RNA sequence: GGGAACGACUCGAGUAGAGUCGAAAAGGGAAGGUGGUAUUGGUGGGCCACUCUUGAGGCUGUGGCCGGCCAGCCCUAUCGGCUAGGUGAACCACACUACACACAUACAUUUGCCAGGCCUGCUAGGCUGUAUUCUGGCCUUCGGGCCAGAAUACAGAAAAGAAACAACAACAACAAC
Reactivity to DMS in 0.01 (KOAc 150mM, MgCl2 10mM, bicine 150mM(pH8.5), 24C), signal-to-noise 1, nucleotides 027 to 126: g010g020g020a060a140g000g030u000g000g020u000a110u000u000g010g040u000g020g010g050c010c010a020c000u010c100u000u020g000a150g000g040c130u000g030u010g020g030c000c020g000g000c020c040a050g000c050c000c050u000a020u020c100g000g000c050u010a090g000g040u010g000a110a070c050c010a040c020a030c070u030a050c070a120c110a080c060a080u000a090c100a110u000u000u000g020c010c050a150g010g000c020c010u000g020c140u010a070g000g020
Conditions: 150 mM KOAc, 10 mM MgCl2 and 150 mM bicine (pH 8.5), 24 C. An RNA of 177 nucleotides, treated with DMS and read out base by base. DMS adducts were read by reverse transcription with MarathonRT. Values cover nucleotides 27 to 126.